RNA sequence: GGGAACGACUCGAGUAGAGUCGAAAAGCUGCCUCUGACGUCCUUCUCCCCCGGAAACGGGGCCGAAGGGUGGUAAAGCGCGUCGCCUGGCGCUCGCACGGGUAUGCGUGGGGGUCGACCCUGGCCGCCAGUACGAUAGGUUCGCCUAUCGUACUGGAAAAGAAACAACAACAACAAC
Reactivity to DMS in 0.01 (KOAc 150mM, MgCl2 10mM, bicine 150mM(pH8.5), 24C), signal-to-noise 4, nucleotides 027 to 126: g000c030u000g020c010c000u000c040u010g010a120c030g020u000c000c000u000u000c010u000c300c000c010c000c010g020g010a070a060a190c010g010g000g020g040c050c050g000a010a010g000g000g010u010g010g010u010a050a090a110g010c040g020c010g000u000c110g050c040c020u020g000g020c030g010c110u010c110g010c020a080c030g000g000g000u000a040u000g000c020g030u000g000g010g000g000g010u000c070g000a070c040c010c010u010g020g000c050c110g010
Reactivity to 2A3 in 0.01 (KOAc 150mM, MgCl2 10mM, bicine 150mM(pH8.5), 24C), signal-to-noise 2, nucleotides 027 to 126: g000c010u000g010c010c000u050c040u050g030a000c010g010u020c010c010u000u010c020u090c010c000c000c000c000g000g000a010a020a000c010g010g000g000g010c000c000g020a000a010g000g020g000u030g010g060u090a060a050a030g010c020g010c010g050u070c080g060c030c020u000g020g010c030g020c090u150c110g080c050a140c040g030g000g030u060a050u170g020c030g010u110g000g000g000g000g020u080c060g130a300c000c000c000u010g040g050c050c030g060